[RMDB]
RNA sequence: GGGAACGACUCGAGUAGAGUCGAAAAGGUGCCGGAUCCGACAGCCACGGUGUCCCCGCCGGCCGAUCUGGUCACCCGGAGUCGACGGCAAGCGGUACCACAGCAGGCUCAUCGGUAGUAACGAGGGUACGUUCGUAAUCUUCGGAUUACGAACGUAAAAAGAAACAACAACAACAAC
Reactivity to 2A3 in 0.01 (KOAc 150mM, MgCl2 10mM, bicine 150mM(pH8.5), 24C), signal-to-noise 1, nucleotides 027 to 126: g010g000u070g000c000c000g020g010a040u020c050c000g070a070c060a030g040c010c000a040c030g000g030u050g070u100c030c000c000c000g000c010c010g010g010c120c000g000a020u010c000u080g050g030u240c100a070c010c000c000g040g030a060g150u100c050g020a020c000g000g000c000a000a090g040c070g070g020u040a040c000c030a020c000a010g080c070a050g000g000c010u060c080a080u030c050g090g020u060a040g070u020a090a090c100g020a090g000g140g000
Reactivity to DMS in 0.01 (KOAc 150mM, MgCl2 10mM, bicine 150mM(pH8.5), 24C), signal-to-noise 3, nucleotides 027 to 126: g010g030u010g000c030c000g010g010a070u010c010c060g010a070c220a060g010c040c040a180c090g020g000u000g010u000c070c070c020c100g000c000c110g000g010c070c010g050a120u000c000u000g010g010u000c190a130c230c000c010g000g010a050g030u010c040g000a170c000g010g030c050a110a080g020c070g030g020u000a070c120c030a110c100a110g000c070a080g010g000c060u000c090a040u010c040g010g010u010a110g000u000a060a060c100g000a080g000g020g010